About this RNA
The record gives the reactivity of an RNA of 177 nucleotides to DMS and 2A3. Source: RMDB library OK2TST, as collected in RNAgym. For 2A3, 1,618 sequencing reads were counted.
RNA sequence: GGGAACGACUCGAGUAGAGUCGAAAAGGUGGAGGUAAGACUACCAACAUGUUGACGAGAUUUAGAAGUAACCCCUACCGCACAUGUAUUUUGACGGCAAACUUGGAAUCCAGUCUUGACAUCAACAACAACCAGAGAAUUUCGAUUCUCUGGUUGUAAAAGAAACAACAACAACAAC
Reactivity to DMS in 0.01 (KOAc 150mM, MgCl2 10mM, bicine 150mM(pH8.5), 24C), signal-to-noise 4, nucleotides 027 to 126: g010g020u020g010g030a130g010g020u000a070a110g000a100c110u010a090c060c020a090a090c090a060u010g000u000u000g010a090c040g000a120g010a100u010u010u010a060g030a070a110g020u000a100a110c080c020c030c040u010a090c050c030g020c050a060c080a030u000g000u010a050u000u010u010u000g000a150c070g000g000c060a050a040a090c080u000u000g010g000a080a070u000c050c040a060g010u000c020u000u000g010a090c120a050u020c090a030a050c130a060
Reactivity to 2A3 in 0.01 (KOAc 150mM, MgCl2 10mM, bicine 150mM(pH8.5), 24C), signal-to-noise 2, nucleotides 027 to 126: g000g020u010g010g040a050g000g110u150a120a010g090a080c050u060a070c050c030a020a040c040a050u110g050u150u050g070a120c040g000a020g000a230u060u040u210a170g050a250a030g080u090a090a170c010c000c000c030u000a020c020c000g040c000a050c000a090u030g070u150a120u100u290u040u090g040a010c030g030g000c020a030a070a040c020u000u020g020g050a020a010u000c020c020a010g010u010c000u000u010g020a010c020a060u030c000a010a040c000a010